[RMDB]
RNA sequence: GGGAACGACUCGAGUAGAGUCGAAAAGAUAUGGAGCACACCCAAGCAACAGCGUGAGUCUCGGAAACGAGACCACGACAUGCUUGGUGUGCUCCUAAGUCAAAAGCGUUGCACUUCGGUGCAACGCGUUUGUUCGAGACUUCGGUCUCGAACAAACAAAAGAAACAACAACAACAAC
Reactivity to DMS in 0.01 (KOAc 150mM, MgCl2 10mM, bicine 150mM(pH8.5), 24C), signal-to-noise 2, nucleotides 027 to 126: g010a030u000a300u010g000g020a000g020c000a020c000a010c100c050c190a030a020g010c000a040a120c300a200g020c000g040u000g000a150g010u000c000u000c000g020g000a060a060a130c010g020a010g000a030c010c000a010c010g000a030c100a230u000g000c000u010u000g010g000u000g020u000g010c000u000c000c000u000a000a060g000u020c030a100a100a080a190g000c000g020u010u000g020c000a030c000u000u020c220g030g000u010g000c000a000a000c010g030c010
Reactivity to 2A3 in 0.01 (KOAc 150mM, MgCl2 10mM, bicine 150mM(pH8.5), 24C), signal-to-noise 2, nucleotides 027 to 126: g020a000u040a000u060g020g000a000g000c000a000c000a000c010c180c050a010a010g010c010a040a170c080a170g070c000g010u040g030a260g080u000c000u050c020g020g000a070a050a020c010g000a000g000a000c020c000a000c000g060a000c000a130u300g000c010u010u000g020g000u000g000u000g000c000u000c000c000u000a010a000g000u010c000a000a000a090a090g000c000g000u000u000g000c000a020c020u040u130c300g170g000u000g020c000a000a000c000g020c000